RNA sequence: GGGAACGACUCGAGUAGAGUCGAAAAAGGUCUGUAAUAACUGGGAGGGAGAGUAAGAUCACUGAGAAAUUCCUACCUUCGAGACCUGGGGACACAAGUCCUGCCCAAGACUAUGGCUGAACCAGGACAACAGAAAACACUAAUUCCAUACUCCUAGUACCGGUAGAUCAUUCGUGAUCUACCGGUAAAAAGAAACAACAACAACAAC
Reactivity to 2A3 in 0.01 (KOAc 150mM, MgCl2 10mM, bicine 150mM(pH8.5), 24C), signal-to-noise 3, nucleotides 027 to 156: a000g030g010u010c010u030g090u100a080a130u070a240a140c060u050g030g000g000a040g000g050g000a080g000a020g030u060a070a020g040a130u070c060a070c170u150g040a050g030a120a080a020u050u040c010c010u030a100c010c010u020u050c080g060a040g010a050c000c010u000g000g010g000g040a020c010a000c020a180a020g020u000c000c010u050g040c010c000c000a020a000g020a010c040u080a090u210g040g040c060u040g040a030a020c020c000a010g020g020a020c010a080a010c010a060g110a070a140a030a010c080a030c020u070a150a060u120u040c010c000a010u020a090c020u030c010c000u030a010g060
Reactivity to DMS in 0.01 (KOAc 150mM, MgCl2 10mM, bicine 150mM(pH8.5), 24C), signal-to-noise 1, nucleotides 027 to 156: a030g030g010u010c000u020g020u000a120a110u000a090a070c090u010g000g000g020a070g010g000g010a060g020a120g040u010a060a070g020a140u000c030a210c000u010g010a210g030a090a080a070u010u000c020c010u000a080c040c000u040u000c020g000a110g000a100c010c010u000g040g000g010g050a140c050a040c060a000a080g000u000c020c010u010g000c030c050c020a270a130g020a070c050u000a080u000g010g010c050u000g040a120a250c080c000a080g020g020a010c030a060a170c030a120g000a040a040a010a050c050a130c050u010a070a120u000u000c010c020a110u010a080c040u010c010c020u010a050g010